[RMDB]
RNA sequence: GGGAACGACUCGAGUAGAGUCGAAAAGAUAUGGAGUGGAAUGCAUGACAACAGCCUAACUCGGAAACGAGUUAGGACAUGUCAUGUUCACACUCCUAAGUCAAAAGGGAAGUCUUCGGACUUCCCACUAAUGAAGUAUCUUCGGAUACUUCAUUAGAAAAGAAACAACAACAACAAC
Reactivity to DMS in 0.01 (KOAc 150mM, MgCl2 10mM, bicine 150mM(pH8.5), 24C), signal-to-noise 9, nucleotides 027 to 126: g000a040u000a300u010g010g000a030g030u010g000g000a200a100u010g010c000a010u010g010a010c000a040a120c300a220g000c010c000u000a000a010c000u000c000g010g000a100a100a250c000g010a010g000u000u000a000g000g000a010c080a100u000g000u010c000a010u000g010u000u000c100a300c010a010c000u000c000c000u000a020a090g000u010c050a060a080a170a100g010g010g000a010a010g010u000c000u000u010c280g030g000a020c000u000u000c000c000c000a010
Reactivity to 2A3 in 0.01 (KOAc 150mM, MgCl2 10mM, bicine 150mM(pH8.5), 24C), signal-to-noise 9, nucleotides 027 to 126: g040a010u090a050u200g000g000a000g010u010g010g070a150a050u180g020c000a000u000g010a000c010a160a040c050a180g030c000c000u000a000a000c000u010c010g020g020a050a070a050c010g000a010g000u000u000a000g010g000a010c010a000u020g000u000c000a000u000g000u030u020c010a000c000a000c010u000c000c000u000a080a010g060u020c050a040a040a090a120g010g000g030a010a010g000u000c010u090u210c300g120g010a030c000u010u000c000c000c000a000